An RNA of 177 nucleotides, treated with DMS and 2A3 and read out base by base. Source: RMDB library RFM100, as collected in RNAgym. Conditions: 150 mM KOAc, 10 mM MgCl2 and 150 mM bicine (pH 8.5), 24 C.
RNA sequence: GGGAACGACUCGAGUAGAGUCGAAAAGAAAGAAAGAACAGUAGAAGCGUCCCUUGCAGGGGCUGUUGGGUUGCAUCCUAAGCUGUGCUGGAGCUUCCCGAUGUACUCUGUAGAUGUCUUUGCACAAACCGGGUCAAUUAUUCGUAAUUGACCCGGUAAAAGAAACAACAACAACAAC
Reactivity to DMS in 0.01 (KOAc 150mM, MgCl2 10mM, bicine 150mM(pH8.5), 24C), signal-to-noise 2, nucleotides 027 to 126: g000a040a080a100g040a070a080a050g040a150a080c100a070g010u020a060g030a100a100g040c030g020u000c010c110c000u000u030g030c030a010g000g000g000g000c090u000g020u020u000g020g000g010u000u000g020c000a050u010c010c000u070a100a060g000c050u000g030u030g010c010u000g030g020a020g000c000u000u000c000c000c000g000a050u000g000u000a030c000u000c000u000g030u000a070g010a070u030g020u010c020u000u000u000g000c130a060c190a010a160
Reactivity to 2A3 in 0.01 (KOAc 150mM, MgCl2 10mM, bicine 150mM(pH8.5), 24C), signal-to-noise 4, nucleotides 027 to 126: g100a000a020a000g150a070a090a020g080a130a050c050a040g120u210a040g040a200a000g050c020g070u020c020c000c000u020u050g000c010a010g030g000g020g050c050u050g030u020u070g010g020g000u010u000g030c090a260u040c020c020u090a090a030g030c070u210g090u190g180c030u030g000g020a000g000c000u010u010c020c000c000g000a040u070g010u040a250c000u000c010u000g010u020a010g000a070u060g040u020c040u060u040u120g070c100a060c010a110a050